[RMDB]
RNA sequence: GGGAACGACUCGAGUAGAGUCGAAAAAGCGAGUGGAGGAGCGCACUCUCCUUAAACGGCGUACGUUUUAAAUUAGACGACAACGAUAAUUUUGCAAUGGCAGCCUAAGGGCAGCCCGUCUUGCCUGAGAGUACCACGGCUUGGGUAAAGGCGUCGACUUUUUAUGCACCUUCGGGUGCAUAAAAAGAAAAGAAACAACAACAACAAC
Reactivity to 2A3 in 0.01 (KOAc 150mM, MgCl2 10mM, bicine 150mM(pH8.5), 24C), signal-to-noise 2, nucleotides 027 to 156: a010g080c030g050a050g000u100g030g010a030g000g000a040g010c050g000c040a100c050u090c010u060c000c000u060u050a150a090a070c050g020g030c040g020u110a020c030g010u050u050u010u130a160a270a160u090u060a030g050a050c040g030a030c060a080a010c030g090a100u060a200a120u110u200u170u140g060c040a060a060u000g000g000c030a020g000c000c000u040a070a130g130g020g000c010a030g000c000c000c000g000u000c000u000u010g000c000c000u030g010a050g000a020g030u120a220c000c050a060c050g080g000c000u000u020g010g000g000u090a170a080a000g010g030c020g000u020c000g020a020
Structure probing data (2A3) for a 207-nucleotide construct. It was measured as part of the RMDB library ARCHII. For 2A3 the reverse transcriptase was SuperScript II with manganese.